The data come from the RNA Mapping Database (RMDB), library OK2TRN. Chemical mapping of a 177-nucleotide RNA with DMS. The RNA was probed in 150 mM KOAc, 10 mM MgCl2 and 150 mM bicine (pH 8.5) at 24 C. Reactivities are rounded to 0.1 and cut off at 0 and 3.
RNA sequence: GGGAACGACUCGAGUAGAGUCGAAAAAAGGAUUGAUAGUUAAAAUGCCUCUCUUUUGUUAUUAUCUUCUUUGCUCUGUACUUAGAAUGGACGUACUUGUUCUGAUUUGAGGACUUCUUCAUGGUCAAUCUUGCUACGUCUUCGGACGUAGCAAGAUAAAAGAAACAACAACAACAAC
Reactivity to DMS in 0.01 (KOAc 150mM, MgCl2 10mM, bicine 150mM(pH8.5), 24C), signal-to-noise 1, nucleotides 027 to 126: a040a000g010g000a040u000u000g010a070u000a070g000u000u000a040a030a120a090u010g010c030c020u010c050u000c020u010u000u000u000g010u000u000a080u000u010a090u000c040u000u000c020u000u000u000g010c060u000c020u010g010u000a040c070u010u020a080g030a080a060u010g010g000a030c030g030u020a070c120u010u010g010u010u000c070u000g000a090u000u010u020g010a090g030g000a100c120u000u000c050u000u000c050a080u000g020g000u000c090a030